[RMDB]
RNA sequence: GGGAACGACUCGAGUAGAGUCGAAAAGAUAUGGACAUUGGGUUUCUUUGAUCUACAGUCGGAAACGACUGUAGGGAGAAAUCCCGGGUGUCCUAAGUCAAAAGUAACCAUGUUCGCAUGGUUACAAGACACUAUUGUUGUUCGCAACAAUAGUGUCAAAAGAAACAACAACAACAAC
Reactivity to DMS in 0.01 (KOAc 150mM, MgCl2 10mM, bicine 150mM(pH8.5), 24C), signal-to-noise 3, nucleotides 027 to 126: g020a030u000a010u010g000g000a020c000a140u020u010g020g010g010u000u000u000c000u000u000u020g010a060u000c000u020a010c000a010g000u010c000g030g000a010a010a050c010g030a020c000u000g010u000a010g000g020g010a000g020a010a020a000u010c000c000c260g000g020g030u010g020u000c010c000u000a000a110g000u000c010a100a120a130a150g020u000a010a010c000c000a000u000g010u000u010c300g020c000a000u000g010g010u000u000a000c000a100a090
Reactivity to 2A3 in 0.01 (KOAc 150mM, MgCl2 10mM, bicine 150mM(pH8.5), 24C), signal-to-noise 3, nucleotides 027 to 126: g010a000u030a010u060g000g000a000c020a020u060u260g000g000g050u090u020u090c040u300u300u020g010a010u020c000u000a010c000a000g010u000c000g010g010a010a000a000c000g020a000c000u010g000u000a000g000g020g010a020g000a010a030a020u110c030c000c020g250g150g120u140g000u020c010c000u000a000a000g020u020c020a090a020a100a120g010u010a000a000c000c010a000u010g030u050u090c300g020c160a010u000g000g030u000u020a000c000a000a020